Background:
Source: RMDB library OK1LIB, as collected in RNAgym. The record gives the reactivity of an RNA of 177 nucleotides to 2A3 and DMS. The reactions ran in a buffer of 150 mM KOAc, 10 mM MgCl2 and 150 mM bicine (pH 8.5), at 24 C. The DMS profile rests on 5,877 reads.
RNA sequence: GGGAACGACUCGAGUAGAGUCGAAAAUAUCAUUCAAGUAGGCAAUGUUAAAUUAGAAGUUCUGCAUACUCCAGGACACACGCCUGAAAGUAUUAGCUUUUUACUCACUGAUUUAGGUGGUGGUUCACGAGCUCUUAAUAUUCGUAUUAAGAGCUCGAAAAGAAACAACAACAACAAC
Reactivity to 2A3 in 0.01 (KOAc 150mM, MgCl2 10mM, bicine 150mM(pH8.5), 24C), signal-to-noise 6, nucleotides 027 to 126: u120a020u040c050a050u090u110c070a070a040g090u070a050g150g000c060a080a080u060g030u160u240a140a120a130u150u130a070g040a190a010g040u080u050c010u030g010c030a060u020a120c000u000c060c050a030g000g030a020c010a010c010a000c050g020c000c000u020g010a080a020a010g070u060a100u100u170a020g020c070u090u110u040u100u160a060c030u040c050a080c050u050g080a200u030u040u060a020g010g000u010g010g030u030g010g000u040u020c070a020
Reactivity to DMS in 0.01 (KOAc 150mM, MgCl2 10mM, bicine 150mM(pH8.5), 24C), signal-to-noise 4, nucleotides 027 to 126: u060a060u030c070a100u000u030c080a120a090g010u020a040g000g030c060a050a050u010g000u020u010a010a080a100u010u040a090g010a130a150g020u010u010c040u000g020c090a050u000a070c030u010c100c040a090g040g010a050c050a080c080a070c120g010c000c030u000g030a020a060a040g010u000a040u010u000a060g010c110u010u010u020u020u000a070c040u010c110a040c040u010g000a080u020u010u010a020g010g000u000g010g010u000g010g000u000u020c070a270